An RNA of 207 nucleotides, treated with DMS and 2A3 and read out base by base.
[RMDB]
RNA sequence: GGGAACGACUCGAGUAGAGUCGAAAAGUUAGGUGAGGCUCCUAUGCAAACACAGGCCACUGCCCAAAAAUGUCCAAAGACGCCAAUGGGUAGAACAGGGAUUGACGGAUUAAGGCUUUCCAUAAUGAAAACAAAGUAUGCUUCGGCAUACUUUGAAGUACUGUUCAUCGUUCGCGAUGAACAGUACAAAAGAAACAACAACAACAAC
Reactivity to DMS in 0.01 (KOAc 150mM, MgCl2 10mM, bicine 150mM(pH8.5), 24C), signal-to-noise 1, nucleotides 027 to 156: g000u010u000a030g020g040u000g000a090g030g020c010u010c040c030u030a050u000g010c090a110a060a040c070a090c040a150g000g040c000c020a110c010u000g020c000c000c010a010a030a110a120a140u000g000u000c010c020a100a060a240g000a080c060g040c040c030a030a250u000g010g010g000u010a010g030a040a150c060a140g030g000g030a080u000u000g070a030c000g010g010a110u010u000a100a050g000g000c010u000u000u000c000c000a060u000a050a170u000g030a070a030a080a230c010a010a000a030g010u000a000u020g000c010u000u030c300g100g050c000a000u000a000c020u000u000u000g010a030a190
Reactivity to 2A3 in 0.01 (KOAc 150mM, MgCl2 10mM, bicine 150mM(pH8.5), 24C), signal-to-noise 2, nucleotides 027 to 156: g080u080u050a020g020g010u060g040a040g000g040c010u040c030c020u050a060u120g050c040a020a140a050c030a030c030a100g020g050c000c020a030c010u000g000c020c000c000a000a000a000a030a000u040g010u000c030c040a160a070a070g020a010c040g020c010c030a030a050u010g000g000g010u010a000g000a030a030c050a020g000g050g010a010u000u080g070a070c040g000g030a010u100u090a070a010g010g000c000u030u050u000c010c000a040u040a150a060u240g090a080a080a010a020c000a000a000a000g000u000a010u000g010c000u010u060c160g030g000c000a000u020a000c010u000u020u000g000a000a000
Annotation:
For DMS the reverse transcriptase was MarathonRT. Source: RMDB library M2RFPK, as collected in RNAgym.